[RMDB]
RNA sequence: GGGAACGACUCGAGUAGAGUCGAAAACAUGGAGGGUGGGCAUCCCCUGCCCCCCUUACUGCAGCCCCACGGACGGUGGGCACCCCCAGCCCGCUGACCUUGCAGCGCAGGGCGAUGAGCUGGCCGAUAUUGAUGUUCCAUUCGUGGAACAUCAAUAAAAAGAAACAACAACAACAAC
Reactivity to DMS in 0.01 (KOAc 150mM, MgCl2 10mM, bicine 150mM(pH8.5), 24C), signal-to-noise 4, nucleotides 027 to 126: c120a060u010g010g010a040g000g010g030u010g040g010g020c020a080u010c050c030c020c130u000g000c000c000c000c010c000c010u000u010a040c040u010g010c050a090g000c080c010c110c050a170c160g000g000a120c040g010g020u000g010g000g030c020a050c020c030c020c010c010a170g020c010c010c000g000c020u000g000a070c010c010u000u010g020c060a080g020c120g010c040a050g000g000g000c040g000a070u010g000a140g030c030u000g010g000c050c060g000a170
Reactivity to 2A3 in 0.01 (KOAc 150mM, MgCl2 10mM, bicine 150mM(pH8.5), 24C), signal-to-noise 2, nucleotides 027 to 126: c050a040u130g060g050a030g010g060g030u190g050g020g000c010a060u080c020c020c000c020u000g000c000c030c010c000c000c000u010u000a060c000u030g050c020a060g020c000c040c000c010a040c030g040g020a000c020g040g000u030g020g010g000c000a200c020c000c010c000c010a000g000c020c010c000g000c020u000g000a030c000c000u030u080g010c050a020g050c030g000c090a020g060g000g020c030g050a120u120g050a030g020c030u040g060g000c030c030g060a060
This 177-nucleotide RNA was probed chemically with DMS and 2A3. For 2A3 the reverse transcriptase was SuperScript II with manganese. It was measured as part of the RMDB library OK2TRN. The RNA was probed in 150 mM KOAc, 10 mM MgCl2 and 150 mM bicine (pH 8.5) at 24 C. Reactivities are given for positions 27 through 126.